[RMDB]
An RNA of 177 nucleotides, treated with DMS and 2A3 and read out base by base.
DMS adducts were read by reverse transcription with MarathonRT.
Conditions: 150 mM KOAc, 10 mM MgCl2 and 150 mM bicine (pH 8.5), 24 C.
It was measured as part of the RMDB library OK1LIB.
RNA sequence: GGGAACGACUCGAGUAGAGUCGAAAAUGACAACUGUCUCAUAUCCAUCUGCUAUGGCUUCCACUAUAUACUGGCUAUAAGGUCUAACAUCAGAUGGUUGUAGAGAGUAAUCUACAUCUGGUGCUGGCCCGCUAUAUGAGUUCGCUCAUAUAGCGGGAAAAGAAACAACAACAACAAC
Reactivity to DMS in 0.01 (KOAc 150mM, MgCl2 10mM, bicine 150mM(pH8.5), 24C), signal-to-noise 2, nucleotides 027 to 126: u020g000a100c090a130a030c110u000g000u000c040u010c000a070u000a070u000c030c000a070u010c080u000g000c060u000a050u010g000g000c050u030u000c010c050a090c070u000a160u010a080u070a110c070u060g000g000c140u030a030u000a130a100g000g010u000c020u010a050a090c020a020u000c050a000g030a000u010g000g070u000u070g050u010a050g010a020g000a080g010u070a030a050u000c000u000a110c020a030u000c020u090g000g000u020g010c060u020g010g000
Reactivity to 2A3 in 0.01 (KOAc 150mM, MgCl2 10mM, bicine 150mM(pH8.5), 24C), signal-to-noise 5, nucleotides 027 to 126: u150g030a020c030a140a040c080u120g040u090c010u020c010a070u070a040u130c020c010a020u020c030u080g020c030u080a080u170g010g000c030u040u030c020c020a090c070u010a030u010a010u030a210c040u080g040g000c030u040a030u020a300a050g090g030u020c050u060a080a060c020a050u040c000a010g010a020u020g150g010u060u120g050u060a020g010a000g040a020g090u190a040a190u030c010u010a010c000a000u000c020u030g010g000u030g040c030u020g040g040